[RMDB]
RNA sequence: GGGAACGACUCGAGUAGAGUCGAAAAUACAAGAAGGGGGGACGGAGAAGGCUAUGUUGGCCGGGCGACGGUUGUCCCGGUUUAAGCGUGUAGGCUGGUUUUCCAGGCAAAUCCGGAACAAAAUGAAUAGCUCACAAAUAUUCGUAUUUGUGAGCUAAAAAGAAACAACAACAACAAC
Reactivity to DMS in 0.01 (KOAc 150mM, MgCl2 10mM, bicine 150mM(pH8.5), 24C), signal-to-noise 2, nucleotides 027 to 126: u020a140c050a070a090g020a120a130g010g000g030g010g000g010a020c030g030g000a080g030a140a060g010g010c060u000a070u000g010u010u000g000g010c030c020g020g010g020c300g010a030c130g020g000u010u010g000u000c010c000c020g010g000u000u000u000a040a070g030c060g040u010g000u000a060g010g000c020u000g000g010u020u000u010u000c010c020a190g040g010c070a080a060a100u000c010c000g000g010a120a060c120a040a030a060a080u010g010a090a170